This 177-nucleotide RNA was probed chemically with 2A3 and DMS. For 2A3, 419 sequencing reads were counted. The RNA was probed in 150 mM KOAc, 10 mM MgCl2 and 150 mM bicine (pH 8.5) at 24 C. Source: RMDB library OK1LIB, as collected in RNAgym. For DMS the reverse transcriptase was MarathonRT.
[RMDB]
RNA sequence: GGGAACGACUCGAGUAGAGUCGAAAAGUGUGACUGGAGUCAAGUAUGUUGCUAGAACUAUAAAAUUGCGUCCAGAAGAUAGGUAUGUUCGGGUGUUGGAUUUGUUACAUAUUGUGCGUAGUAUUAGAAUCCAUGCAAUCUUCGGAUUGCAUGGAUUAAAAGAAACAACAACAACAAC
Reactivity to 2A3 in 0.01 (KOAc 150mM, MgCl2 10mM, bicine 150mM(pH8.5), 24C), signal-to-noise 2, nucleotides 027 to 126: g010u040g010u040g110a120c070u060g000g000a000g080u070c060a050a040g000u060a260u190g000u070u000g140c150u060a080g060a270a040c030u010a000u150a100a150a000a210u110u150g000c020g090u000c000c030a000g060a050a000g190a080u180a100g090g000u040a070u180g070u000u030c000g050g130g000u000g000u050u060g000g000a000u000u000u000g030u000u060a080c020a030u240a060u190u080g000u060g000c080g010u100a080g010u000a020u000u000a000g040
Reactivity to DMS in 0.01 (KOAc 150mM, MgCl2 10mM, bicine 150mM(pH8.5), 24C), signal-to-noise 3, nucleotides 027 to 126: g010u010g010u000g000a070c030u010g030g010a100g000u000c050a090a070g010u010a040u000g010u020u010g010c090u010a090g000a080a070c110u010a090u060a060a040a070a070u010u000g020c070g010u020c020c040a100g000a040a060g030a090u020a030g020g010u020a060u000g000u000u010c050g000g000g010u000g000u020u010g000g030a050u010u020u000g010u020u000a090c150a070u040a060u000u000g040u000g000c130g000u000a070g020u000a070u010u010a120g000